[RMDB]
RNA sequence: GGGAACGACUCGAGUAGAGUCGAAAAGGGACGCCUUUAGAAGAAGAGGCUAGGUGGUAUUCCGGUGCGGGAUACUUGGUAAUAUGUAACGCUAAUUGCAUAAGAUUGUAGGACGGAAUUUACAGUCAAAACGGUCCUGCGUUCGCGCAGGACCGAAGUUGAUACGAUGCUUCGGCAUCGUAUCAACAAAAGAAACAACAACAACAAC
Reactivity to 2A3 in 0.01 (KOAc 150mM, MgCl2 10mM, bicine 150mM(pH8.5), 24C), signal-to-noise 1, nucleotides 027 to 156: g000g000g000a000c050g000c000c040u080u020u110a250g000a150a000g070a050a000g010a020g030g000c020u040a020g080g000u040g050g080u040a050u070u000c010c010g080g060u140g100c140g000g010g010a050u060a030c000u040u100g010g030u060a030a040u030a080u200g030u030a010a010c050g020c210u100a080a060u080u160g000c030a050u050a170a050g010a030u070u040g060u030a070g020g080a100c140g010g030a030a000u040u050u070a090c050a010g040u080c080a070a040a070a070c000g000g000u000c000c000u000g000c000g000u000u000c130g000c000g000c060a000g000g120a000c000c000g000a000a000
The record gives the reactivity of an RNA of 207 nucleotides to 2A3. The 2A3 profile rests on 663 reads. It was measured as part of the RMDB library M2RFPK. For 2A3 the reverse transcriptase was SuperScript II with manganese.